RNA sequence: GGGAACGACUCGAGUAGAGUCGAAAAGGUGGGGACUGGUUUCCUGUUAAGCCCUCGCUGUCAGUCCUGGCUGUGGAAUUUCCUGGUGAGGAGCACUGGCCCGUGGAGCUCGGCCCUCGUGCCGGCCAGCCAAAGGAUGAUUCGUCAUCCUUUGGCUAAAAGAAACAACAACAACAAC
Reactivity to 2A3 in 0.01 (KOAc 150mM, MgCl2 10mM, bicine 150mM(pH8.5), 24C), signal-to-noise 2, nucleotides 027 to 126: g110g020u050g000g010g000g000a020c020u060g030g030u040u070u020c020c000u000g100u140u110a080a050g000c030c020c000u000c000g000c010u020g020u100c020a010g030u020c000c010u010g070g000c020u040g020u130g160g040a130a220u140u090u080c000c010u010g050g030u070g080a050g010g000a050g020c010a020c030u030g020g020c000c040c040g020u050g060g020a100g010c090u110c200g030g000c010c030c000u130c020g020u120g000c020c010g030g000c030c010
Reactivity to DMS in 0.01 (KOAc 150mM, MgCl2 10mM, bicine 150mM(pH8.5), 24C), signal-to-noise 3, nucleotides 027 to 126: g000g030u000g020g020g000g000a050c050u010g020g010u000u000u000c050c040u000g020u000u010a110a110g000c040c010c010u000c060g020c030u010g010u000c050a060g010u000c020c020u000g000g010c050u000g020u010g010g010a130a130u000u000u000c020c030u000g000g010u000g000a070g000g010a090g000c080a090c070u000g000g000c030c090c060g010u000g010g010a150g000c050u020c060g000g010c030c030c110u000c210g010u000g010c030c040g010g010c060c070